The record gives the reactivity of an RNA of 177 nucleotides to DMS and 2A3. The reactions ran in a buffer of 150 mM KOAc, 10 mM MgCl2 and 150 mM bicine (pH 8.5), at 24 C. The DMS profile rests on 7,561 reads. Reactivities are rounded to 0.1 and cut off at 0 and 3.
[RMDB]
RNA sequence: GGGAACGACUCGAGUAGAGUCGAAAAUGUGCGGCCAAGACAGAUUUGAUUGCAGCGACAGCUCGGCUACUCGUCAUGGUCCGCGCCGUGUAGCCAGCAUGGCACUAUUUGUUCACAUGGCACCGCAUCAUUAGUAUGCCUUCGGGCAUACUAAUGAAAAAGAAACAACAACAACAAC
Reactivity to DMS in 0.01 (KOAc 150mM, MgCl2 10mM, bicine 150mM(pH8.5), 24C), signal-to-noise 6, nucleotides 027 to 126: u010g020u000g010c040g010g000c020c010a040a090g010a020c020a040g000a090u010u000u010g000a120u000u000g050c120a090g020c060g010a220c300a080g010c010u000c090g010g010c010u000a020c030u000c090g020u000c030a120u000g010g010u010c040c040g030c090g010c060c020g000u000g000u000a040g020c010c020a130g000c030a070u000g000g000c020a100c080u010a060u000u000u010g000u000u010c060a070c110a130u000g010g020c050a160c060c030g000c110a100
Reactivity to 2A3 in 0.01 (KOAc 150mM, MgCl2 10mM, bicine 150mM(pH8.5), 24C), signal-to-noise 6, nucleotides 027 to 126: u100g010u030g010c020g000g000c000c010a010a020g010a000c040a040g090a110u140u160u120g170a230u100u170g050c090a030g040c040g130a100c090a060g000c030u030c060g020g010c000u010a010c010u030c040g020u010c020a060u070g040g000u110c010c040g010c020g000c000c000g000u010g010u020a020g010c010c010a010g020c040a070u050g020g020c010a010c040u090a150u120u130u150g080u080u100c040a040c050a180u050g000g000c030a020c040c020g010c000a040